Background
Structure probing data (DMS and 2A3) for a 207-nucleotide construct. DMS adducts were read by reverse transcription with MarathonRT. In probing experiments dimethyl sulfate is read out at A N1 and C N3, which are open when not base-paired. For DMS, 2,975 sequencing reads were counted. The RNA was probed in 150 mM KOAc, 10 mM MgCl2 and 150 mM bicine (pH 8.5) at 24 C. Reactivities are given for positions 27 through 156.

[RMDB]
RNA sequence: GGGAACGACUCGAGUAGAGUCGAAAAGAACACGUCUCGGGACGACGCUAAACUCGCCCUGGUCGGGAUGGGUUUAACGACCCCUCGGCUUUCCUAGUUCCUAAAACUAGGUGGUGGAGUCAUAUAAAAAACUUCUACACGUUCGCGUGUAGAAGAAGUAUACGUGUGAGUUCGCUCACACGUAUACAAAAGAAACAACAACAACAAC
Reactivity to DMS in 0.01 (KOAc 150mM, MgCl2 10mM, bicine 150mM(pH8.5), 24C), signal-to-noise 1, nucleotides 027 to 156: g010a150a140c040a180c010g030u000c010u000c000g040g010g040a040c030g000a060c040g040c150u000a080a050a070c100u000c000g050c010c000c030u010g010g010u000c060g040g000g030a060u000g010g000g000u010u000u000a160a140c100g010a050c010c000c010c000u000c020g020g000c030u020u000u000c020c000u000a000g000u000u000c050c220u010a040a010a050a030c020u010a050g000g010u000g000g000u000g000g010a130g020u020c040a100u000a130u020a010a020a040a070a090a100c000u000u000c000u010a020c000a000c010g000u000u000c260g030c030g030u000g020u000a010g010a000a020g020a030a030
Reactivity to 2A3 in 0.01 (KOAc 150mM, MgCl2 10mM, bicine 150mM(pH8.5), 24C), signal-to-noise 5, nucleotides 027 to 156: g050a060a030c060a010c080g000u010c000u010c010g010g050g000a130c300g010a030c040g020c260u020a010a000a010c000u000c000g000c000c000c000u000g000g000u010c000g000g010g060a110u160g080g020g000u010u030u110a080a020c040g020a000c000c000c000c000u000c000g000g000c000u040u000u000c000c000u000a010g010u020u050c040c060u130a050a040a010a010c010u000a020g030g000u020g030g040u070g040g070a070g030u110c070a080u140a030u300a190a070a020a000a030a050c000u010u000c000u000a000c010a010c010g050u060u060c220g010c000g090u000g000u000a000g010a000a000g000a000a000